[RMDB]
RNA sequence: GGGAACGACUCGAGUAGAGUCGAAAAGAUAUGGAGCAGGCAAGGGAGCUGUGCGUCGGAAACGACGCAUACAGCGAGGAUCUUGCCCUGCUCCUAAGUCAAACAUUGUCAGGUUCGCCUGACAAUGCCGAUAAACGAGCUUCGGCUCGUUUAUCGGAAAAGAAACAACAACAACAAC
Reactivity to DMS in 0.01 (KOAc 150mM, MgCl2 10mM, bicine 150mM(pH8.5), 24C), signal-to-noise 1, nucleotides 027 to 126: g000a030u000a300u010g010g000a010g020c010a040g000g040c000a020a020g020g000g040a060g010c000u000g010u020g000c000g020u000c000g010g000a070a120a090c000g000a010c040g010c000a020u020a050c000a020g000c010g050a130g020g000a080u000c000u000u000g000c150c010c050u000g000c000u010c000c010u000a010a090g010u000c020a160a150a300c000a000u020u000g000u010c020a000g010g000u000u020c300g000c020c000u010g240a020c000a000a010u000g010
Notes: Structure probing data (DMS) for a 177-nucleotide construct. The DMS profile rests on 1,123 reads. The RNA was probed in 150 mM KOAc, 10 mM MgCl2 and 150 mM bicine (pH 8.5) at 24 C.